[RMDB]
RNA sequence: GGGAACGACUCGAGUAGAGUCGAAAAUUAAAGGAGUGAAGGUACAAGCGACAGUGUCCAACUGAGGUAAUCGACCAGUGCCAGUACCAAGACGUGCGUAGUCAACUCAAAGGCAGAACGCAAAAAAGGCCACUAAUAGAUUCGUCUAUUAGUGGCCAAAAGAAACAACAACAACAAC
Reactivity to DMS in 0.01 (KOAc 150mM, MgCl2 10mM, bicine 150mM(pH8.5), 24C), signal-to-noise 1, nucleotides 027 to 126: u000u020a110a050a120g030g000a150g000u000g040a120a170g010g020u000a000c020a180a100g010c120g010a110c000a050g010u000g010u000c060c020a080a050c100u000g010a070g000g000u000a130a090u000c130g000a090c020c020a130g000u000g010c030c080a140g000u000a040c060c050a100a150g000a100c050g000u000g000c010g060u000a130g010u020c040a020a040c100u000c050a030a180a070g000g010c080a100g010a090a010c020g000c010a000a050a010a080a020a050

An RNA of 177 nucleotides, treated with DMS and read out base by base. The reactions ran in a buffer of 150 mM KOAc, 10 mM MgCl2 and 150 mM bicine (pH 8.5), at 24 C. For DMS, 583 sequencing reads were counted.